[RMDB]
RNA sequence: GGGAACGACUCGAGUAGAGUCGAAAAUGCAUUAGCGAUGACGAAUGUAGAAUUUUAUCGUAUUAUCGCGGCAAAAUAUCGCGCUUUAAUCCGCUCAAAGCACACUAUAUGGAAUAGUAUACCUGCUGAUCUGUAUACGAAUGGUUGCAUUAAAUUAUCCAUCCUCUCCUUUCGAGGAGAGGAUGGAAAAAGAAACAACAACAACAAC
Reactivity to 2A3 in 0.01 (KOAc 150mM, MgCl2 10mM, bicine 150mM(pH8.5), 24C), signal-to-noise 1, nucleotides 027 to 156: u130g030c010a140u000u210a010g010c000g070a070u000g010a000c040g040a050a100u150g090u300a160g100a230a220u040u090u120u180a090u010c000g000u000a220u030u000a000u050c030g000c000g000g000c000a000a000a070a000u040a020u150c070g000c000g000c040u010u020u060a020a020u050c010c010g080c000u070c150a050a030a030g010c000a020c000a010c090u020a000u010a010u150g020g040a020a000u030a030g000u040a000u040a160c000c050u050g010c010u010g110a110u000c020u000g030u010a000u000a040c050g090a130a070u140g000g120u040u090g050c040a000u140u000a030a030a050u200u070a090
About this RNA: An RNA of 207 nucleotides, treated with 2A3 and read out base by base. The data come from the RNA Mapping Database (RMDB), library OK3TST.